Source: RMDB library OK2TRN, as collected in RNAgym. An RNA of 177 nucleotides, treated with 2A3 and DMS and read out base by base. The 2A3 profile rests on 1,184 reads. Conditions: 150 mM KOAc, 10 mM MgCl2 and 150 mM bicine (pH 8.5), 24 C. Reactivities are given for positions 27 through 126.

[RMDB]
RNA sequence: GGGAACGACUCGAGUAGAGUCGAAAAUAGGCAGUAGCGCGAUCGUACGAGUACUGUACGUACCGCUAGCAUGCUACAUGACUACGCGACCAUGCGUACGGAUCGCUAGCCAUGAGCGUACUCAUGCCGCGGAAAUGCACUUCGGUGCAUUUCCGCGAAAAGAAACAACAACAACAAC
Reactivity to 2A3 in 0.01 (KOAc 150mM, MgCl2 10mM, bicine 150mM(pH8.5), 24C), signal-to-noise 1, nucleotides 027 to 126: u150a030g020g000c030a020g100u050a040g000c000g030c020g040a110u220c000g010u000a000c040g000a020g110u090a110c020u200g020u040a000c060g000u010a040c030c000g000c000u000a010g120c010a020u090g000c000u050a090c010a020u050g020a020c000u040a030c150g000c080g000a030c050c000a100u170g160c110g120u140a110c110g000g100a300u040c020g000c000u000a000g000c000c000a040u010g000a000g000c080g020u120a080c030u040c090a060u050g000c030
Reactivity to DMS in 0.01 (KOAc 150mM, MgCl2 10mM, bicine 150mM(pH8.5), 24C), signal-to-noise 2, nucleotides 027 to 126: u020a050g020g000c010a080g000u010a030g040c010g000c060g000a160u000c000g030u000a000c000g000a300g020u000a140c230u000g030u000a000c010g000u010a230c300c000g000c000u000a030g050c030a040u000g040c000u010a090c030a000u000g000a020c020u010a020c250g000c000g000a020c130c020a060u000g000c220g020u010a090c200g030g000a110u000c000g000c030u000a000g010c030c010a020u000g000a060g000c000g040u000a030c010u000c100a090u000g000c030

2A3 adducts were read by reverse transcription with SuperScript II with manganese. The DMS profile rests on 925 reads. DMS adducts were read by reverse transcription with MarathonRT.